The record gives the reactivity of an RNA of 177 nucleotides to 2A3 and DMS. For DMS the reverse transcriptase was MarathonRT. For 2A3 the reverse transcriptase was SuperScript II with manganese. Values cover nucleotides 27 to 126.
RNA sequence: GGGAACGACUCGAGUAGAGUCGAAAAGAUAUGGAAUCACAAGGGAGAAUACAGUCGGAAACGACUGCGGUUCGACGAUCUUGUUGAUUCCUAAGUCAAGCGCUAGGCUGCUUCGGCAGCCUAGCAACUAAUAUGCCCAGUUCGCUGGGCAUAUUAGAAAAGAAACAACAACAACAAC
Reactivity to 2A3 in 0.01 (KOAc 150mM, MgCl2 10mM, bicine 150mM(pH8.5), 24C), signal-to-noise 2, nucleotides 027 to 126: g000a000u000a000u050g010g000a010a010u010c010a000c000a000a020g000g010g000a040g010a000a000u040a050c000a000g010u000c010g000g020a010a000a000c000g000a020c010u000g000c060g140g030u020u000c040g270a190c050g000a030u000c010u010u030g010u030u060g010a010u010u020c000c000u000a010a010g000u000c050a080a090g200c020g030c300u020a000g000g040c000u030g040c030u050u230c300g140g090c010a000g040c000c010u000a000g000c000a000a000
Reactivity to DMS in 0.01 (KOAc 150mM, MgCl2 10mM, bicine 150mM(pH8.5), 24C), signal-to-noise 2, nucleotides 027 to 126: g000a030u000a020u020g000g000a020a010u000c000a010c010a010a000g000g000g010a010g010a030a030u000a110c000a000g000u000c000g020g000a010a010a020c010g000a010c010u000g010c070g000g020u000u000c000g000a100c240g000a020u000c000u010u000g000u000u000g010a020u000u000c000c000u000a010a070g000u000c000a220a190g010c290g010c000u000a010g010g010c000u010g000c010u000u010c260g010g010c000a010g010c000c000u000a000g000c010a030a060